[RMDB]
RNA sequence: GGGAACGACUCGAGUAGAGUCGAAAAAUACCGGAUAUUCAUUCUAGGCGGCAUCGUUGGAGGUGGAAAGUUUUUCGGCUUAGGAAGGGCUCGCGGCAUAUCAACUUAAAGGUGGGGUGAUGGCCUAAAUUUUAUUAAAAUUCGUUUUAAUGAAAUUAAAAGAAACAACAACAACAAC
Reactivity to DMS in 0.01 (KOAc 150mM, MgCl2 10mM, bicine 150mM(pH8.5), 24C), signal-to-noise 8, nucleotides 027 to 126: a090u030a110c030c030g000g000a080u020a040u020u020c060a050u010u010c050u010a100g010g010c040g000g000c060a040u010c050g010u010u010g000g010a080g000g020u010g000g000a060a060a080g010u000u000u010u010u020c050g000g000c030u010u010a100g010g010a080a070g000g000g010c040u000c080g010c090g000g000c060a050u020a050u020c080a050a080c060u020u020a050a070a100g000g020u000g010g000g000g010u010g010a040u000g000g000c020c020u000a030
Reactivity to 2A3 in 0.01 (KOAc 150mM, MgCl2 10mM, bicine 150mM(pH8.5), 24C), signal-to-noise 1, nucleotides 027 to 126: a000u110a040c000c010g010g030a040u030a070u080u110c050a010u070u000c050u040a030g080g000c000g000g000c000a020u010c030g010u010u050g050g020a060g000g040u030g000g020a030a010a000g000u000u000u000u040u050c020g000g010c000u030u030a020g020g010a020a060g010g020g020c020u020c030g020c000g010g000c010a020u050a000u050c020a000a040c000u010u080a060a020a010g060g000u010g000g000g000g000u020g000a030u040g000g000c000c000u010a010

Structure probing data (DMS and 2A3) for a 177-nucleotide construct. The 2A3 profile rests on 3,336 reads. Values cover nucleotides 27 to 126. The RNA was probed in 150 mM KOAc, 10 mM MgCl2 and 150 mM bicine (pH 8.5) at 24 C. Source: RMDB library OK1LIB, as collected in RNAgym.